RNA sequence: GGGAACGACUCGAGUAGAGUCGAAAACAACUUUUUGAUCGUCAAACUUAAUGGCGCGCUGCUCGAUGGCGUCGCGGAGUCUGUGGAAGCGUGUAAGCCGUCGCUUUGCCUCGGCAGCUUCCUUGCGUCGCGUGGAUGCGUUCGCGCAUCCACGCGAAAAAGAAACAACAACAACAAC
Reactivity to 2A3 in 0.01 (KOAc 150mM, MgCl2 10mM, bicine 150mM(pH8.5), 24C), signal-to-noise 1, nucleotides 027 to 126: c000a000a020c000u030u200u000u050u160g300a220u160c080g090u050c070a120a120a100c130u140u160a170a070u110g020g000c000g000c000g130c000u020g000c040u050c070g000a000u110g000g030c000g030u130c010g000c000g100g000a000g030u000c120u150g080u090g050g000a130a000g000c000g000u160g070u120a000a020g010c000c000g000u130c010g040c020u100u140u140g030c020c000u000c000g000g000c070a060g000c000u090u000c000c000u000u240g000c030g050

Conditions: 150 mM KOAc, 10 mM MgCl2 and 150 mM bicine (pH 8.5), 24 C. An RNA of 177 nucleotides, treated with 2A3 and read out base by base. The 2A3 profile rests on 453 reads. Values cover nucleotides 27 to 126. For 2A3 the reverse transcriptase was SuperScript II with manganese.